Conditions: 150 mM KOAc, 10 mM MgCl2 and 150 mM bicine (pH 8.5), 24 C.
This 177-nucleotide RNA was probed chemically with DMS and 2A3.
For DMS the reverse transcriptase was MarathonRT.
For 2A3, 1,677 sequencing reads were counted.
Values are in units of 0.01, from 0 to 300, in steps of 10.
The DMS profile rests on 5,491 reads.
The data come from the RNA Mapping Database (RMDB), library M2PK90.
RNA sequence: GGGAACGACUCGAGUAGAGUCGAAAAGUUGCGCGAGAAGAGAUCACACAGAUGAGACACAAGGAGCGAUGUCUCAUCACUUGGUUUUCGACAAGUGACGAGUCGUUCCCAAAAUCGCUCCAAUGAAGACUAUAUAGCGUUUCGACGCUAUAUAGUCAAAAGAAACAACAACAACAAC
Reactivity to DMS in 0.01 (KOAc 150mM, MgCl2 10mM, bicine 150mM(pH8.5), 24C), signal-to-noise 4, nucleotides 027 to 126: g010u010u000g020c070g020c070g000a070g010a100a130g000a110g000a090u000c030a070c070a080c160a120g020a010u000g000a010g000a010c000a020c100a070a050g010g010a020g020c000g010a080u000g010u000c000u010c000a020u000c010a060c090u000u000g010g010u000u000u000u000c000g010a010c010a090a080g010u000g010a100c030g010a010g000u000c000g010u000u000c000c000c000a000a010a040a040u000c010g000c000u000c000c010a130a070u010g010a130a120
Reactivity to 2A3 in 0.01 (KOAc 150mM, MgCl2 10mM, bicine 150mM(pH8.5), 24C), signal-to-noise 1, nucleotides 027 to 126: g110u080u130g030c060g020c040g000a020g050a160a030g050a000g060a190u090c010a020c000a000c010a080g010a010u000g000a000g000a030c000a000c000a050a170g000g000a000g000c000g000a000u010g020u000c010u000c000a000u010c000a000c000u010u040g040g000u000u000u040u030c000g000a010c000a030a150g080u040g160a030c010g000a020g020u020c030g040u000u000c020c020c000a010a010a000a000u010c000g000c010u060c020c050a000a000u160g010a040a020